Background
Structure probing data (2A3 and DMS) for a 177-nucleotide construct. Source: RMDB library M2PK50, as collected in RNAgym.
[RMDB]
RNA sequence: GGGAACGACUCGAGUAGAGUCGAAAAGAAGUUGUGUUCGCACAACUUCAAAAGCUAGUAGGUACUGGGCAAGUAGUACCUAGUAGUAGCCCGUUCAACUAAAAAUCAACCUCUUCGGAGGUUGAAACUUUUGAGAAUAGUUCGCUAUUCUCAAAAGAAAAGAAACAACAACAACAAC
Reactivity to 2A3 in 0.01 (KOAc 150mM, MgCl2 10mM, bicine 150mM(pH8.5), 24C), signal-to-noise 3, nucleotides 027 to 126: g010a010a000g010u000u000g000u000g020u040u090c150g030c060a000c000a010a010c000u000u000c000a000a000a020a000g000c000u020a020g030u000a000g130g000u000a010c020u050g060g160g060c120a160a050g140u050a010g000u010a120c000c010u000a000g010u010a000g010u000a030g020c000c000c010g010u150u130c050a120a110c040u120a110a030a020a050a120u020c000a010a000c000c000u040c020u070u090c260g170g000a000g020g000u000u000g000a000a000a000
Reactivity to DMS in 0.01 (KOAc 150mM, MgCl2 10mM, bicine 150mM(pH8.5), 24C), signal-to-noise 4, nucleotides 027 to 126: g010a010a000g010u000u010g020u000g000u000u010c210g020c010a010c000a000a010c000u000u000c000a020a050a110a220g010c000u000a010g000u000a010g000g010u000a000c000u000g030g010g010c230a110a210g020u000a000g000u000a000c000c000u000a010g000u000a010g010u000a120g010c010c000c000g000u010u010c150a100a090c160u000a020a080a080a140a120u000c000a000a000c000c000u000c000u000u000c210g040g010a010g000g000u000u000g010a020a030a050

2A3 adducts were read by reverse transcription with SuperScript II with manganese. As a SHAPE reagent, 2A3 marks flexible, mostly unpaired nucleotides at the ribose 2'-OH.